RNA sequence: GGGAACGACUCGAGUAGAGUCGAAAACAGCGACGUCGCCUACUGGGAAACCGACGUCGACGCAUGGCGGGACGCCUACGGCGAGCGCCUCCUCGUCAAGGCCACCACGCGCCACGCGAUCGGCUGGGAUAUGCGCGGACACCAGAUGGACACGACCCUUUCACGAUAAGUUCGCUUAUCGUGAAAGAAAAGAAACAACAACAACAAC
Reactivity to 2A3 in 0.01 (KOAc 150mM, MgCl2 10mM, bicine 150mM(pH8.5), 24C), signal-to-noise 3, nucleotides 027 to 156: c060a000g140c030g090a060c030g060u060c050g020c020c010u090a140c010u050g010g000g050a170a140a090c020c000g040a030c020g010u000c000g000a000c000g050c020a020u020g000g010c030g000g020g010a030c020g040c000c000u070a080c140g000g010c010g020a010g030c050g150c040c030u110c020c000u010c000g000u000c030a040a040g000g010c000c070a070c040c020a020c040g200c010g000c030c000a000c010g010c000g120a300u020c010g010g000c020u080g030g110g040a050u100a060u280g100c180g000c000g030g000a050c060a020c100c010a010g000a080u050g000g000a050c080a020c100g090a080c010c000
The record gives the reactivity of an RNA of 207 nucleotides to 2A3. Reactivities are rounded to 0.1 and cut off at 0 and 3.